[RMDB]
RNA sequence: GGGAACGACUCGAGUAGAGUCGAAAACUGUACUUGGUUCCUAUUUUGGUUUCAAACAAGAUUUACUGACUUUUACUCACUAAGAUAACCUACAUCUCCAUGGUUAUAUUGGUCCAUCUUUCAAUCGGCCAUUACCCAAAUUCGUUUGGGUAAUGGCAAAAGAAACAACAACAACAAC
Reactivity to DMS in 0.01 (KOAc 150mM, MgCl2 10mM, bicine 150mM(pH8.5), 24C), signal-to-noise 1, nucleotides 027 to 126: c070u010g010u010a030c070u070u000g050g000u000u010c020c010u020a090u020u000u010u020g010g030u000u000u000c170a050a080a070c060a060a050g000a060u000u000u000a080c050u000g020a030c100u000u000u010u050a050c040u000c000a080c020u000a010a100g000a080u000a000a000c030c000u000a140c120a060u030c080u020c020c030a090u010g000g020u000u000a030u030a060u010u000g000g000u000c010c090a080u010c100u000u000u030c030a040a100u000c170g030
Reactivity to 2A3 in 0.01 (KOAc 150mM, MgCl2 10mM, bicine 150mM(pH8.5), 24C), signal-to-noise 4, nucleotides 027 to 126: c000u070g050u110a070c030u030u020g030g030u090u020c020c050u040a210u080u100u050u060g120g010u000u080u110c070a130a140a110c040a120a090g030a110u030u110u120a030c030u010g050a010c010u060u080u030u070a040c020u010c030a030c040u070a000a070g010a080u020a020a010c000c000u040a070c030a240u100c030u000c030c040a080u100g030g000u080u050a060u030a060u050u060g030g000u000c000c000a070u030c100u050u100u090c050a060a080u040c040g030
Record summary
Source: RMDB libraries RFM100 and RFMREP, as collected in RNAgym. Chemical mapping of a 177-nucleotide RNA with DMS and 2A3. The reactions ran in a buffer of 150 mM KOAc, 10 mM MgCl2 and 150 mM bicine (pH 8.5), at 24 C.